The record gives the reactivity of an RNA of 177 nucleotides to DMS and 2A3. The reactions ran in a buffer of 150 mM KOAc, 10 mM MgCl2 and 150 mM bicine (pH 8.5), at 24 C. Source: RMDB library OK1LIB, as collected in RNAgym. The DMS profile rests on 1,180 reads. Reactivities are given for positions 27 through 126.

RNA sequence: GGGAACGACUCGAGUAGAGUCGAAAACUUACGGGCAGAGAACGUGGUUUUGCCAGCAAUUUUCUCGAACAUUUCGCGGCCAGACUCGUCCGUAAUCCAAUCAGGAGUAGUCAUAACAAUGCGGCCGACGGUGACGAGUAUUCGUACUCGUCACCGUAAAAGAAACAACAACAACAAC
Reactivity to DMS in 0.01 (KOAc 150mM, MgCl2 10mM, bicine 150mM(pH8.5), 24C), signal-to-noise 1, nucleotides 027 to 126: c160u000u030a070c010g000g000g040c000a040g000a030g000a090a000c150g040u010g040g010u000u000u000u000g000c010c000a130g000c110a210a100u080u070u000u010c180u000c060g030a140a180c170a140u000u020u070c070g000c000g000g040c000c020a260g000a000c000u000c060g000u090c000c090g000u020a030a020u000c020c140a160a140u010c100a160g000g020a110g000u000a070g030u000c080a130u030a110a000c160a120a030u000g020c190g010g000c030c000g000
Reactivity to 2A3 in 0.01 (KOAc 150mM, MgCl2 10mM, bicine 150mM(pH8.5), 24C), signal-to-noise 2, nucleotides 027 to 126: c000u100u110a000c000g000g030g020c080a080g100a010g050a300a000c120g150u070g040g000u000u090u170u160g070c120c050a020g020c030a160a160u000u010u150u030c140u020c050g100a050a000c000a170u010u150u160c100g000c010g000g000c040c000a010g020a090c070u010c030g070u010c000c030g000u000a000a010u010c000c030a040a120u080c070a060g000g120a030g030u100a010g060u120c010a050u010a140a080c010a040a070u080g050c000g050g020c000c000g000